Conditions: 150 mM KOAc, 10 mM MgCl2 and 150 mM bicine (pH 8.5), 24 C. The record gives the reactivity of an RNA of 177 nucleotides to 2A3 and DMS. For DMS, 2,685 sequencing reads were counted. 2A3 adducts were read by reverse transcription with SuperScript II with manganese. Reactivities are given for positions 27 through 126. For DMS the reverse transcriptase was MarathonRT. 2A3 is a SHAPE reagent: it acylates the 2'-hydroxyl of flexible nucleotides of all four kinds.
RNA sequence: GGGAACGACUCGAGUAGAGUCGAAAAGAGAAGCGCGACGCCUUCCUCGCGCGGAUCGUGCCGAGCGUCAGCGAAGCCGACUUCGAAGGCUGCGACCUGAUCAUCGAGGCGGUCUUCGAGGACCGCAAUCCCCAGCUAUGUUCGCAUAGCUGGGGAUAAAAGAAACAACAACAACAAC
Reactivity to 2A3 in 0.01 (KOAc 150mM, MgCl2 10mM, bicine 150mM(pH8.5), 24C), signal-to-noise 2, nucleotides 027 to 126: g040a000g000a050a040g010c000g000c000g050a020c030g110c020c030u080u070c040c010u030c010g010c000g010c010g010g020a030u000c010g040u110g080c000c000g030a040g010c040g040u080c070a030g000c020g020a010a010g030c000c020g120a140c020u060u070c040g050a070a030g000g000c030u040g010c050g050a190c010c010u070g040a130u130c050a040u050c100g020a010g090g000c010g000g020u030c020u010u090c040g040a060g000g060a030c060c000g000c000a010
Reactivity to DMS in 0.01 (KOAc 150mM, MgCl2 10mM, bicine 150mM(pH8.5), 24C), signal-to-noise 3, nucleotides 027 to 126: g010a050g010a300a240g010c020g010c010g000a030c090g030c030c060u000u000c030c050u000c010g010c020g020c020g000g020a170u000c030g000u020g040c050c030g010a180g020c100g000u010c050a000g020c010g000a060a070g010c010c020g010a170c070u010u010c090g000a060a090g020g000c030u000g010c070g000a090c150c030u010g000a080u010c090a150u010c070g000a150g020g000c000g010g010u000c010u000u010c060g000a090g010g010a070c030c030g010c050a140